[RMDB]
Conditions: 150 mM KOAc, 10 mM MgCl2 and 150 mM bicine (pH 8.5), 24 C. Chemical mapping of a 177-nucleotide RNA with 2A3 and DMS. For 2A3, 5,357 sequencing reads were counted. DMS adducts were read by reverse transcription with MarathonRT. It was measured as part of the RMDB library TTRDES. The DMS profile rests on 4,689 reads. DMS (dimethyl sulfate) methylates the pairing face of unpaired adenines and cytosines.
RNA sequence: GGGAACGACUCGAGUAGAGUCGAAAAGAUAUGGAUUUGCACACUCGAUAAGCCAGUGUCGGAAACGACACAUGGCUUUUGACGAGUGGCAAAUCCUAAGUCAAAGCUGAGGGUUCGCCCUCAGCAAGAAAUCACAAAACUUCGGUUUUGUGAUUUCAAAAGAAACAACAACAACAAC
Reactivity to 2A3 in 0.01 (KOAc 150mM, MgCl2 10mM, bicine 150mM(pH8.5), 24C), signal-to-noise 2, nucleotides 027 to 126: g020a000u020a010u100g030g010a030u030u000u000g070c190a200c000a020c300u010c040g150a240u080a300a000g000c000c000a000g000u000g020u000c000g020g000a100a010a000c010g020a000c000a010c050a050u010g000g000c070u000u000u000u010g030a010c000g000a000g010u010g000g000c000a000a000a000u000c000c000u000a020a000g020u000c030a040a130a100g020c000u010g010a010g000g050g020u050u220c300g220c000c000c020u000c010a000g000c000a010a000
Reactivity to DMS in 0.01 (KOAc 150mM, MgCl2 10mM, bicine 150mM(pH8.5), 24C), signal-to-noise 3, nucleotides 027 to 126: g000a030u010a110u020g000g000a010u000u010u000g000c010a150c010a010c010u000c010g000a150u010a010a020g010c000c000a010g000u000g000u000c000g020g010a030a030a070c000g010a000c000a000c000a070u010g000g020c000u000u000u000u000g010a170c080g020a010g020u010g000g000c000a000a000a000u000c010c000u000a000a050g010u000c020a130a120a160g020c010u000g010a020g000g010g010u000u020c300g000c010c010c000u000c000a000g020c000a020a030